Annotation:
An RNA of 207 nucleotides, treated with 2A3 and read out base by base. Reactivities are given for positions 27 through 156. It was measured as part of the RMDB library M2RFPK.
RNA sequence: GGGAACGACUCGAGUAGAGUCGAAAAGGCAGGACUUACCAAGUCUGGGGGCCGAUGAGGGUUGGCUCUAAGUAGGGUUUUGACUUGAAAACUCAAGCUGUGACCCCAAAACGAUGGAGGUAAAUGAAAAAUCCAUCUGCCUUCGGGCAGAUGGAAAGUCUGUAGUACCGUUCGCGGUACUACAGACAAAAGAAACAACAACAACAAC
Reactivity to 2A3 in 0.01 (KOAc 150mM, MgCl2 10mM, bicine 150mM(pH8.5), 24C), signal-to-noise 1, nucleotides 027 to 156: g000g000c010a000g020g010a010c010u000u040a090c040c040a120a010g040u030c020u030g010g000g010g080g030c020c030g020a030u060g040a120g060g000g020u030u010g000g000c020u020c040u030a080a060g060u070a070g130g050g010u040u070u090u080g110a100c020u010u010g000a060a000a100a080c100u050c020a000a010g000c020u070g030u130g050a020c000c000c000c020a010a120a010a030c100g020a020u050g010g030a040g000g020u050a040a090a190u200g110a120a130a010a000a030u000c000c000a000u000c000u010g000c000c000u000u040c080g050g010g020c000a010g000a010u020g000g020a010a010a010